[RMDB]
RNA sequence: GGGAACGACUCGAGUAGAGUCGAAAAGCCAGCGGUAAGCCGUUGCGCGCCGAUCUCAGCGCCCGACUGGAUCGCGAUGUGCGUCUGGACAAUGACGCUAACUGUUUUGCCUUGUCCGAAGCCUGGGGAUACCCGACGGAUUCGUCCGUCGGGUAUCAAAAGAAACAACAACAACAAC
Reactivity to 2A3 in 0.01 (KOAc 150mM, MgCl2 10mM, bicine 150mM(pH8.5), 24C), signal-to-noise 6, nucleotides 027 to 126: g020c000c000a000g010c000g020g050u160a140a070g110c010c010g050u030u070g050c050g000c010g020c090c020g060a100u000c150u020c050a030g020c020g070c040c020c000g070a070c000u020g030g010a070u030c010g010c030g060a090u060g050u070g040c010g010u000c020u070g050g020a050c070a080a130u140g010a030c010g000c020u020a070a070c040u070g090u080u070u060u110g020c010c020u050u070g030u000c010c010g020a070a010g010c000c010u030g020g000g020
Reactivity to DMS in 0.01 (KOAc 150mM, MgCl2 10mM, bicine 150mM(pH8.5), 24C), signal-to-noise 2, nucleotides 027 to 126: g000c020c010a040g000c040g010g000u040a110a080g000c000c020g000u040u010g030c130g000c000g000c080c030g010a100u010c020u030c020a110g020c020g000c000c000c010g000a160c040u000g000g000a050u010c040g020c050g010a040u030g000u010g030c020g000u000c000u030g010g020a060c130a040a050u020g000a050c010g000c030u010a080a090c130u020g010u020u000u020u000g000c030c010u000u010g040u000c000c010g000a060a100g040c020c020u000g000g000g040

The record gives the reactivity of an RNA of 177 nucleotides to 2A3 and DMS. 2A3 adducts were read by reverse transcription with SuperScript II with manganese. The data come from the RNA Mapping Database (RMDB), library OK1LIB. The DMS profile rests on 4,518 reads. Reactivities are given for positions 27 through 126. Conditions: 150 mM KOAc, 10 mM MgCl2 and 150 mM bicine (pH 8.5), 24 C.